[RMDB]
RNA sequence: GGGAACGACUCGAGUAGAGUCGAAAAGGAGUGCUACCGAAAGGUAGCACUCCAACAAAUCGGUGUAAGAGCAGCCCUUCUUACACCGUGCGGCACAGCGGAAACGCUGAUGUCGUAUACGGGGCUAGGAUUUAAAUAAUUUCGAUUAUUUAAAUCCAAAAGAAACAACAACAACAAC
Reactivity to 2A3 in 0.01 (KOAc 150mM, MgCl2 10mM, bicine 150mM(pH8.5), 24C), signal-to-noise 1, nucleotides 027 to 126: g000g000a000g000u010g000c010u000a000c010c000g080a080a060a070g020g020u000a000g000c000a000c000u000c000c000a000a000c000a000a010a010u070c010g000g000u000g000u000a010a010g000a010g030c050a010g000c010c000c000u030u030c000u000u000a000c000a000c000c000g000u030g000c000g000g020c010a010c000a020g010c000g010g020a090a050a020c020g000c000u000g010a030u000g000u000c000g000u010a010u040a020c070g040g000g000g000c010u010a090
Reactivity to DMS in 0.01 (KOAc 150mM, MgCl2 10mM, bicine 150mM(pH8.5), 24C), signal-to-noise 3, nucleotides 027 to 126: g000g020a040g040u000g020c000u000a010c000c000g010a130a120a180g010g010u000a000g020c010a000c000u000c000c010a020a050c110a050a060a070u010c000g010g010u000g000u000a000a000g010a060g000c080a080g000c000c000c000u010u010c000u000u000a010c010a010c000c000g000u000g000c020g000g010c000a010c000a010g010c000g000g000a120a110a220c000g030c000u000g000a060u000g030u000c000g010u000a060u000a060c190g010g020g000g010c040u000a130